Description: Source: RMDB library OK2TRN, as collected in RNAgym. An RNA of 177 nucleotides, treated with DMS and read out base by base. Reactivities are given for positions 27 through 126.
RNA sequence: GGGAACGACUCGAGUAGAGUCGAAAAGAUUUAACUGGUCAGGGUUCAACCUAUGGGCUCUAUCCCCAUUUAUUAGAUGUGACUCUUGAAAGUUUCACAGGAAAAUGGUUAGCUAAGCAUGGGUUGCAUAGCGAUUAAGCUUCGGCUUAAUCGCUAUAAAAGAAACAACAACAACAAC
Reactivity to DMS in 0.01 (KOAc 150mM, MgCl2 10mM, bicine 150mM(pH8.5), 24C), signal-to-noise 1, nucleotides 027 to 126: g010a180u010u010u000a080a200c050u010g000g000u010c040a060g000g000g010u030u000c070a030a020c080c070u000a040u000g010g010g020c080u010c150u020a030u010c140c150c010c040a020u010u010u000a080u060u030a160g000a170u000g000u010g000a010c010u030c020u020u000g010a080a090a150g010u000u000u000c040a030c000a030g020g010a030a070a040a020u000g010g020u010u000a070g000c040u000a100a130g020c020a020u000g020g010g010u000u020g010c220